Source information
An RNA of 177 nucleotides, treated with 2A3 and DMS and read out base by base. The reactions ran in a buffer of 150 mM KOAc, 10 mM MgCl2 and 150 mM bicine (pH 8.5), at 24 C. For 2A3 the reverse transcriptase was SuperScript II with manganese. For DMS the reverse transcriptase was MarathonRT. Values cover nucleotides 27 to 126.
RNA sequence: GGGAACGACUCGAGUAGAGUCGAAAACCGUUUCCAGACGGCCCUGAGUGGAUUGUGACGUAACAUGGCACCUUGCUGGCGCUCUCUUAUUAUUUCAUGCCAGUGCCCUCGUUAUGGCGCAAUCAGAAGGACCUUAGAGAUUCGUCUCUAAGGUCCUAAAAGAAACAACAACAACAAC
Reactivity to 2A3 in 0.01 (KOAc 150mM, MgCl2 10mM, bicine 150mM(pH8.5), 24C), signal-to-noise 5, nucleotides 027 to 126: c000c000g000u030u040u010c080c040a060g000a120c030g010g030c000c000c000u060g100a140g150u180g060g030a020u010u000g000u000g000a020c010g010u010a000a010c000a050u030g020g000c020a060c060c090u110u230g040c050u030g050g000c010g010c020u020c000u020c090u130u040a200u190u040a170u050u300u120c090a080u240g000c010c000a010g000u010g050c010c000c010u060c080g000u000u000a020u000g010g000c000g000c000a000a000u000c000a000g060a040
Reactivity to DMS in 0.01 (KOAc 150mM, MgCl2 10mM, bicine 150mM(pH8.5), 24C), signal-to-noise 3, nucleotides 027 to 126: c010c020g000u000u020u030c110c120a180g000a040c030g000g020c020c000c010u020g000a140g020u040g000g000a020u000u000g000u000g010a000c020g000u000a010a020c010a060u000g030g030c040a190c130c190u010u020g070c050u010g000g000c010g020c120u010c100u020c080u020u020a070u020u020a090u030u010u030c130a060u010g010c040c070a070g000u000g000c000c020c060u020c130g000u000u000a010u010g000g000c030g020c010a010a000u000c000a060g000a160